[RMDB]
RNA sequence: GGGAACGACUCGAGUAGAGUCGAAAAUGCUCUCAGAAUUAAGGAAUGAGAUUCAAACUCUGCGAGAACAAAUAGAGCACCACCCCAGAGUUGCAAAGUAUGCUAUGGAAAAUCAUUCCCUCAGGGACACUUAGCUCAACUUCGGUUGAGCUAAGUGAAAAGAAACAACAACAACAAC
Reactivity to DMS in 0.01 (KOAc 150mM, MgCl2 10mM, bicine 150mM(pH8.5), 24C), signal-to-noise 1, nucleotides 027 to 126: u040g020c050u000c000u000c140a200g000a130a120u010u020a110a140g000g000a030a020u000g000a000g000a300u000u000c020a170a110a050c030u000c000u000g010c090g000a030g000a080a080c080a130a080a090u010a050g010a070g000c010a040c010c100a080c040c000c020c000a070g010a070g040u000u000g010c080a050a080a110g020u010a120u000g000c010u010a060u020g020g020a010a060a060a130u020c020a040u000u000c000c000c020u010c070a070g020g000g000a260